[RMDB]
RNA sequence: GGGAACGACUCGAGUAGAGUCGAAAACAGCUUUGUUCGUGGUGAGCGUGAGCAGCUCGCUGGUGAGGGCCAGGAGCUGUCGUUGCACGGCGGAUUGAUCGAUUCGACCGCAUCCAUCUGGAGCUACUAUACAGUGCGCAUUCGUGCGCACUGUAUAAAAAGAAACAACAACAACAAC
Reactivity to DMS in 0.01 (KOAc 150mM, MgCl2 10mM, bicine 150mM(pH8.5), 24C), signal-to-noise 1, nucleotides 027 to 126: c090a080g010c040u010u010u000g010u000u000c120g010u000g010g020u010g000a170g070c060g020u000g000a130g000c030a030g010c030u000c010g010c010u000g000g030u000g000a220g020g010g070c010c000a020g000g000a010g000c040u010g010u000c080g010u010u000g000c030a240c060g010g000c050g000g020a090u010u000g000a100u010c120g000a160u000u000c010g010a130c000c050g000c060a130u000c030c000a020u000c100u010g010g010a030g040c030u000a100c150
Reactivity to 2A3 in 0.01 (KOAc 150mM, MgCl2 10mM, bicine 150mM(pH8.5), 24C), signal-to-noise 1, nucleotides 027 to 126: c020a020g010c040u120u070u090g110u120u080c120g010u060g110g000u090g070a040g010c040g000u060g080a090g020c000a010g000c040u000c170g190c050u030g000g000u060g180a230g000g230g000c000c000a010g000g000a000g000c000u000g020u070c040g050u030u130g000c040a010c010g040g080c020g000g150a200u070u090g080a120u090c190g000a030u060u000c010g090a180c000c050g000c010a010u030c000c040a050u040c100u160g020g030a000g030c010u070a060c060